This 177-nucleotide RNA was probed chemically with 2A3.
The RNA was probed in 150 mM KOAc, 10 mM MgCl2 and 150 mM bicine (pH 8.5) at 24 C.
Values cover nucleotides 27 to 126.
RNA sequence: GGGAACGACUCGAGUAGAGUCGAAAAUUGAGGAAUUGUCAUUGCGGGAUUACCGUAAACCCCCGGAAGGAGUCGGGACACUUGGGAAACUGCCACGGCUUAAAUCGCUGGAUCUCGGUUUAUCUCGAAGCUCAGUUGGUUUCGACCAACUGAGCUUAAAAGAAACAACAACAACAAC
Reactivity to 2A3 in 0.01 (KOAc 150mM, MgCl2 10mM, bicine 150mM(pH8.5), 24C), signal-to-noise 1, nucleotides 027 to 126: u080u080g000a080g000g030a000a000u150u090g150u300c000a000u020u100g040c000g000g000g090a080u110u300a070c060c000g000u040a000a030a050c000c000c000c000c000g020g030a030a030g030g000a120g020u160c000g000g000g000a000c000a000c050u180u150g000g100g030a120a000a000c100u150g000c070c000a120c040g000g000c000u020u100a050a070a000u150c050g000c100u000g100g020a050u040c060u060c070g010g030u140u000u070a170u000c000u020c000g020

For 2A3, 359 sequencing reads were counted.